[RMDB]
RNA sequence: GGGAACGACUCGAGUAGAGUCGAAAACGCAAAGCUGCAGCGCGGCGCUCUGGAGGCCUUGCCCCGCGCAUUGCUCUUUACAUGGCCCGACGUGAGGGCACUUCGCGGGCAGUGCUGCGGCCUCGUGAAACUGCCCCUAAGUUCGCUUAGGGGCAAAGAUUCUGAGACUGUUCGCAGUCUCAGAAUCAAAAGAAACAACAACAACAAC
Reactivity to 2A3 in 0.01 (KOAc 150mM, MgCl2 10mM, bicine 150mM(pH8.5), 24C), signal-to-noise 1, nucleotides 027 to 156: c030g010c000a020a000a140g000c000u000g000c010a010g040c010g050c000g110g060c080g030c040u070c050u200g180g010a080g020g010c000c000u070u080g020c040c000c020c030g000c000g010c000a000u000u030g010c000u010c010u010u130u170a080c060a130u150g100g000c000c030c030g100a140c090g000u030g030a070g000g040g000c020a010c000u000u010c000g000c030g020g020g000c040a050g050u010g020c030u030g010c010g020g000c000c000u000c000g010u050g010a080a050a030c040u030g000c010c010c000c010u000a000a000g010u030u060c150g060c130u000u000a010g000g030g000g000c000a000a000a000
Chemical mapping of a 207-nucleotide RNA with 2A3. For 2A3, 700 sequencing reads were counted. The reactions ran in a buffer of 150 mM KOAc, 10 mM MgCl2 and 150 mM bicine (pH 8.5), at 24 C. 2A3 adducts were read by reverse transcription with SuperScript II with manganese.